RNA sequence: GGGAACGACUCGAGUAGAGUCGAAAAGGAGGGACACAGGAGGCUAAGGAAAGCAUACGAUUGGAUGGUAUGUCCAAGCAAUGAGUCUUGAGUAGAGUAAAAUGCUUUACUCUGUAAGGAUGAGUUAAGUACUCAUGGUGUUCGCACCAUGAGUACUAAAAGAAACAACAACAACAAC
Reactivity to DMS in 0.01 (KOAc 150mM, MgCl2 10mM, bicine 150mM(pH8.5), 24C), signal-to-noise 3, nucleotides 027 to 126: g000g010a060g010g000g010a040c050a070c060a090g010g020a100g010g010c050u010a090a080g020g010a070a060a100g000c050a070u000a050c100g010a140u000u010g000g010a090u010g020g040u000a040u010g000u010c000c000a060a060g000c100a020a070u000g010a180g010u000c010u000u010g000a130g000u000a010g000a010g010u000a050a030a090a120u010g040c040u000u010u000a020c000u000c010u010g010u010a100a020g010g000a040u000g000a190g010u000u000a070
Reactivity to 2A3 in 0.01 (KOAc 150mM, MgCl2 10mM, bicine 150mM(pH8.5), 24C), signal-to-noise 2, nucleotides 027 to 126: g030g000a000g000g010g000a000c010a000c010a070g040g020a020g030g020c040u060a050a020g050g010a150a020a020g010c020a040u070a070c070g100a110u010u110g050g020a050u070g030g110u210a110u170g010u000c010c000a000a000g050c010a000a090u100g010a060g020u000c000u060u050g010a020g000u040a010g020a000g010u060a010a300a090a100u210g000c010u020u020u010a000c000u000c000u010g060u060a050a050g050g000a030u050g020a000g070u060u050a100

Structure probing data (DMS and 2A3) for a 177-nucleotide construct. Source: RMDB library OK2TST, as collected in RNAgym. DMS adducts were read by reverse transcription with MarathonRT. Reactivities are given for positions 27 through 126.